An RNA of 177 nucleotides, treated with DMS and read out base by base.
Reactivities are rounded to 0.1 and cut off at 0 and 3.
The RNA was probed in 150 mM KOAc, 10 mM MgCl2 and 150 mM bicine (pH 8.5) at 24 C.
It was measured as part of the RMDB library OK2TRN.

RNA sequence: GGGAACGACUCGAGUAGAGUCGAAAAUCAGCCUCAAGGCCUCAUCCACCGUUGCAGAGCUGAAGCGGUUCCUGCUUGACAGAGGCCAGCGGCCAGUGAUCUUCACCAGAAGCGCGCUGCUCGCCAGUAGGCACACAGCGUUCGCGCUGUGUGCCUAAAAAGAAACAACAACAACAAC
Reactivity to DMS in 0.01 (KOAc 150mM, MgCl2 10mM, bicine 150mM(pH8.5), 24C), signal-to-noise 1, nucleotides 027 to 126: u030c050a150g020c000c050u010c080a190a140g000g000c000c000u000c110a140u020c140c300a060c050c060g020u000u010g030c000a130g000a140g020c020u000g000a080a060g010c070g060g000u000u000c140c030u020g060c050u070u020g000a110c090a160g000a080g000g020c000c010a050g040c170g020g000c180c080a030g050u000g000a020u000c000u000u000c020a140c280c300a060g020a020a050g020c090g000c050g000c040u000g020c050u000c090g010c080c120a120g040